[RMDB]
RNA sequence: GGGAACGACUCGAGUAGAGUCGAAAAUUGCACGUGAAACAUGGUCAUUGUAUGUUUCUCAUGGCAAUAAUAGAGGUGUUAUGACCUUUAGAAUUUGUAAAUGGCCACGUGUGCCUGGACUAGCACAACUGGUGCCCAGAUUCGUCUGGGCACCAGUAAAAGAAACAACAACAACAAC
Reactivity to DMS in 0.01 (KOAc 150mM, MgCl2 10mM, bicine 150mM(pH8.5), 24C), signal-to-noise 1, nucleotides 027 to 126: u000u000g000c000a090c110g000u000g000a050a020a060c070a050u000g030g030u010c100a040u010u020g000u010a060u000g030u000u000u000c030u000c020a080u020g000g000c030a030a020u000a110a170u000a020g000a010g000g000u000g010u000u010a110u010g030a050c000c000u000u000u000a030g020a140a130u010u040u000g000u000a080a050a070u000g000g010c040c010a000c160g000u000g030u000g000c060c110u000g000g000a040c080u000a050g020c080a090c110a060

This 177-nucleotide RNA was probed chemically with DMS.
DMS adducts were read by reverse transcription with MarathonRT.
For DMS, 951 sequencing reads were counted.